The data come from the RNA Mapping Database (RMDB), library OK2TRN. Structure probing data (2A3 and DMS) for a 177-nucleotide construct. The reactions ran in a buffer of 150 mM KOAc, 10 mM MgCl2 and 150 mM bicine (pH 8.5), at 24 C. The 2A3 profile rests on 785 reads. High DMS reactivity at an A or C suggests that its Watson-Crick edge is free. 2A3 adducts were read by reverse transcription with SuperScript II with manganese.
RNA sequence: GGGAACGACUCGAGUAGAGUCGAAAAUCAGAAUGGUGGCCCUGGUGGAGCCAAUUUCACGUACAAUGAACUUGAGUCAAUUGAAGCCAUCAAGAAGGGCCAGUAUCUGCUGUCGUACAGCAAUACCUCGACUACGCUAUUUCGAUAGCGUAGUCGAAAAAGAAACAACAACAACAAC
Reactivity to 2A3 in 0.01 (KOAc 150mM, MgCl2 10mM, bicine 150mM(pH8.5), 24C), signal-to-noise 1, nucleotides 027 to 126: u080c030a040g140a300a010u120g090g000u020g020g060c000c000c000u020g000g000u060g010g030a000g030c110c010a010a010u040u010u060c070a020c050g030u130a100c100a150a260u200g070a150a020c000u060u010g030a020g160u140c070a030a110u110u040g070a100a000g040c020c000a020u010c030a050a090g260a040a040g000g000g000c000c000a000g030u010a000u010c030u050g030c020u030g030u060c100g060u110a100c010a020g000c000a020a020u090a090c020c000
Reactivity to DMS in 0.01 (KOAc 150mM, MgCl2 10mM, bicine 150mM(pH8.5), 24C), signal-to-noise 1, nucleotides 027 to 126: u010c110a140g000a110a070u000g030g010u000g050g050c000c020c010u000g050g040u000g000g010a150g020c030c010a000a000u000u000u000c020a000c040g000u000a210c160a020a100u000g000a080a190c110u000u000g150a130g010u010c170a070a070u080u000g000a140a020g000c000c000a010u000c010a040a150g010a190a060g000g000g060c010c010a050g000u010a000u000c090u000g010c020u000g010u000c300g000u000a300c060a050g000c000a000a130u000a080c020c110